Structure probing data (2A3) for a 177-nucleotide construct.
RNA sequence: GGGAACGACUCGAGUAGAGUCGAAAAAUAUGCUGCUUUCAUAAUCAUAUGACUUGAAAGAGGACCUGUAAUUAAUACAAAGAUAAUCGCAACGAUUAAUUGCAUAUUUACAAAACCUUGAGUAGCACGGAUCGGAAUCAUUCGUGAUUCCGAUCCGAAAAGAAACAACAACAACAAC
Reactivity to 2A3 in 0.01 (KOAc 150mM, MgCl2 10mM, bicine 150mM(pH8.5), 24C), signal-to-noise 2, nucleotides 027 to 126: a000u170a100u020g000c050u000g130c000u000u020u250c020a040u070a060a040u000c150a210u040a090u180g030a000c010u000u000g030a100a160a000g000a040g000g000a040c000c000u000g000u000a000a000u060u050a000a010u030a180c010a160a000a110g230a130u130a150a080u120c120g020c040a020a110c270g010a000u020u050a000a130u000u000g000c000a000u030a180u150u090u130a020c030a000a000a000a000c020c000u080u180g070a010g040u040a000g000c030a010
Conditions: 150 mM KOAc, 10 mM MgCl2 and 150 mM bicine (pH 8.5), 24 C.